[RMDB]
RNA sequence: GGGAACGACUCGAGUAGAGUCGAAAAGUUCAUCCCCUGAUCAAGGAUGCCCGAAACGGUGAGGCGGAAAGCAAAUUAAAUAACGUCAACCCAUCGGGACGGUUGGCCAGUUAAGAAGUGAGGGUUCAAAAGAUCGAACCGUUCGCGGUUCGAUCAACCUUUUACAUACCUUCGGGUAUGUAAAAGGAAAAGAAACAACAACAACAAC
Reactivity to DMS in 0.01 (KOAc 150mM, MgCl2 10mM, bicine 150mM(pH8.5), 24C), signal-to-noise 1, nucleotides 027 to 156: g060u020u000c010a050u000c020c000c010c080u000g030a110u010c070a060a070g010g020a090u000g000c010c020c010g030a100a130a190c090g040g060u010g000a150g060g030c020g000g000a040a150a130g030c090a090a170a220u000u010a070a070a070u000a130a130c040g000u000c020a030a070c040c000c000a230u010c070g040g020g000a110c030g000g050u020u000g020g000c000c030a070g000u000u000a040a080g000a100a020g020u000g010a050g000g030g030u010u010c060a020a040a110a140g000a050u000c000g010a020a010c010c000g010u000u020c300g020c040g040g000u000u000c020g010a010u000c010a030a000
Reactivity to 2A3 in 0.01 (KOAc 150mM, MgCl2 10mM, bicine 150mM(pH8.5), 24C), signal-to-noise 5, nucleotides 027 to 156: g030u040u060c020a050u040c020c000c000c020u040g020a110u060c010a020a010g060g010a070u090g020c000c000c010g020a080a060a030c110g000g010u060g030a140g030g000c040g000g060a140a050a010g100c140a090a050a090u160u170a060a070a080u150a090a010c010g000u000c020a010a010c000c000c000a030u040c020g010g010g020a020c000g010g030u020u010g030g010c030c020a050g020u060u120a100a050g060a090a000g040u050g060a050g020g050g000u040u060c030a020a040a040a070g010a000u000c000g000a000a000c000c010g010u040u070c160g000c000g060g000u000u000c010g000a000u000c000a000a000
Chemical mapping of a 207-nucleotide RNA with DMS and 2A3. For 2A3 the reverse transcriptase was SuperScript II with manganese. For 2A3, 4,196 sequencing reads were counted. DMS adducts were read by reverse transcription with MarathonRT. Values cover nucleotides 27 to 156.